[RMDB]
RNA sequence: GGGAACGACUCGAGUAGAGUCGAAAACAUCGAUUCGUCGAUGGUAACUUCCUAAGUCCACUCGGGACUCAGCUAGCUCUGCAUCGGAAACGAUGUUGAGCUUGGACCUGAGUUCUCUAGCGUGGUGGAUAUGGAGAUCAUUCAUGUUCGCAUGAAAUUUAUCCGGUAACUUCGGUUACCGGAUAAAAAAAGAAACAACAACAACAAC
Reactivity to 2A3 in 0.01 (KOAc 150mM, MgCl2 10mM, bicine 150mM(pH8.5), 24C), signal-to-noise 1, nucleotides 027 to 156: c000a000u000c000g000a020u050u140c300g050u010c000g060a010u040g020g040u020a130a200c030u060u020c000c010u020a120a000g030u000c010c000a010c030u070c010g000g000g000a000c000u020c000a020g010c040u030a000g000c000u000c000u000g000c000a000u010c000g010g110a110a060a040c000g000a000u000g000u000u020g000a000g030c000u000u020g020g030a030c010c020u000g030a000g000u050u020c050u010c030u060a100g100c050g240u300g040g010u000g010g010a000u020a060u160g090g010a050g040a100u130c080a080u160u070c010a000u020g010u070u060c290g000c140a000u080g070a120a060a040
Reactivity to DMS in 0.01 (KOAc 150mM, MgCl2 10mM, bicine 150mM(pH8.5), 24C), signal-to-noise 1, nucleotides 027 to 156: c020a010u000c010g000a040u000u000c300g030u000c010g010a010u010g000g010u000a050a090c080u010u000c010c000u010a040a180g000u010c010c010a040c010u000c020g000g000g000a010c010u000c010a000g000c020u000a030g000c000u000c000u000g050c000a000u000c010g040g030a230a170a300c010g040a000u000g010u000u010g000a100g010c010u000u010g010g000a010c180c030u000g000a020g000u000u010c000u000c060u010a060g010c090g010u040g010g040u000g010g000a010u000a200u000g010g010a040g020a140u010c140a160u000u010c010a010u000g030u000u040c180g060c010a050u000g000a070a080a210

Conditions: 150 mM KOAc, 10 mM MgCl2 and 150 mM bicine (pH 8.5), 24 C. An RNA of 207 nucleotides, treated with 2A3 and DMS and read out base by base. For DMS, 2,076 sequencing reads were counted. 2A3 adducts were read by reverse transcription with SuperScript II with manganese. For 2A3, 1,061 sequencing reads were counted. Source: RMDB library RNAMAK, as collected in RNAgym.